[RMDB]
RNA sequence: GGGAACGACUCGAGUAGAGUCGAAAAAGGGCUGGAUUCGUCCAGCCCUGCACAUUCGUACGCAACGAAGCGUACGUCAUUACGCUAAUGACGUAAAGCGUAGAACCACGGACUUCGGUCCGUGGAAACUAGCUGGCAUAUUCGUAUGCCAGCUAGUAAAAGAAACAACAACAACAAC
Reactivity to DMS in 0.01 (KOAc 150mM, MgCl2 10mM, bicine 150mM(pH8.5), 24C), signal-to-noise 4, nucleotides 027 to 126: a010g020g000g020c000u000g000g010a030u000u010c200g010u000c000c000a000g010c000c000c000u000g010c110a080c200a190u000u000c030g000u000a020c020g010c000a090a130c210g000a100a130g010c050g010u000a000c010g010u000c080a050u000u000a040c110g010c070u010a060a050u000g010a060c070g010u000a050a070a100g000c020g000u000a050g010a090a180c010c000a010c000g010g000a020c000u000u010c150g020g010u000c000c000g000u000g000g010a010a020
Reactivity to 2A3 in 0.01 (KOAc 150mM, MgCl2 10mM, bicine 150mM(pH8.5), 24C), signal-to-noise 4, nucleotides 027 to 126: a000g030g000g010c000u010g000g000a030u060u040c120g030u000c060c000a000g000c000c000c000u000g010c000a030c000a100u070u070c030g020u020a000c000g000c070a160a110c200g200a200a050g040c000g020u000a010c010g000u000c000a040u040u120a010c040g000c070u050a120a060u170g110a080c050g110u090a090a080a040g010c010g010u020a050g050a090a030c010c000a000c000g000g000a000c000u040u060c240g070g000u000c000c000g000u000g000g000a010a010